RNA sequence: GGGAACGACUCGAGUAGAGUCGAAAAGAUAUGGACCACGACGAUCCUUGAACUACCAGAUUGGUCGGAAACGACCAACUCUGGCAAGGAUUAGUGGUCCUAAGUCAAACGCUGCUUCGGCAGCGAAUCGUACACACAUGUUCGCAUGUGUGUACGAAAAAGAAACAACAACAACAAC
Reactivity to DMS in 0.01 (KOAc 150mM, MgCl2 10mM, bicine 150mM(pH8.5), 24C), signal-to-noise 3, nucleotides 027 to 126: g000a030u000a300u010g000g000a000c020c000a010c010g020a280c260g000a030u010c000c000u000u010g000a090a050c040u020a300c010c000a030g000a070u000u000g000g040u000c000g000g040a090a070a180c010g030a010c000c000a000a000c230u000c000u000g000g000c040a010a010g000g000a000u000u000a180g000u000g000g000u000c000c000u010a010a060g000u010c030a110a140a220c030g020c010u000g000c010u000u020c250g040g020c010a000g000c000g010a020a030
Reactivity to 2A3 in 0.01 (KOAc 150mM, MgCl2 10mM, bicine 150mM(pH8.5), 24C), signal-to-noise 2, nucleotides 027 to 126: g020a020u080a070u190g020g020a000c010c000a010c010g110a040c260g020a050u000c010c010u010u010g070a140a070c120u130a070c300c010a000g000a040u010u000g040g000u000c020g030g000a130a100a030c010g000a000c000c000a010a010c130u000c010u010g000g000c000a000a000g000g000a000u010u030a020g000u010g000g000u000c000c000u010a010a000g000u000c010a050a020a040c020g020c010u020g030c010u060u070c240g180g000c000a000g000c000g000a000a050

An RNA of 177 nucleotides, treated with DMS and 2A3 and read out base by base. Conditions: 150 mM KOAc, 10 mM MgCl2 and 150 mM bicine (pH 8.5), 24 C. Source: RMDB library TTRDES, as collected in RNAgym.